[RMDB]
RNA sequence: GGGAACGACUCGAGUAGAGUCGAAAAGAAAGAAAGAAAGAAAGGUAUGAAGUCCUAUUCACCCUAGAUAGGAUAAACUUCAUAUUGAUCGUGUAUGUGCUAACGCACAUACACGAAUGCGCAUGCAGAACUGCAUGCAUGAACAUAUAGGGUGCAACCCUAGCACCGCUUUCGAGCGGUGCUAGGGAAAAGAAACAACAACAACAAC
Reactivity to 2A3 in 0.01 (KOAc 150mM, MgCl2 10mM, bicine 150mM(pH8.5), 24C), signal-to-noise 2, nucleotides 027 to 156: g080a020a070a000g080a060a080a000g060a070a130a040g060a040a090a020g000g000u000a000u010g000a000a000g000u000c000c000u000a000u000u000c040a040c000c000c000u000a000g000a000u000a000g020g010a020u150a060a050a040c000u000u000c000a000u000a030u070u060g030a050u020c000g000u000g010u000a000u000g030u000g000c090u140a170a060c140g000c000a000c000a000u000a000c000a000c020g000a000a010u030g000c000g000c000a000u000g000c020a010g060a300a160c260u040g000c000a000u000g000c000a010u150g060a080a010c060a040u170a040u020a120g000g030g000u000g000c040a030a090
This 207-nucleotide RNA was probed chemically with 2A3.
The reactions ran in a buffer of 150 mM KOAc, 10 mM MgCl2 and 150 mM bicine (pH 8.5), at 24 C.
2A3 adducts were read by reverse transcription with SuperScript II with manganese.
The 2A3 profile rests on 1,689 reads.
2A3 is a SHAPE reagent: it acylates the 2'-hydroxyl of flexible nucleotides of all four kinds.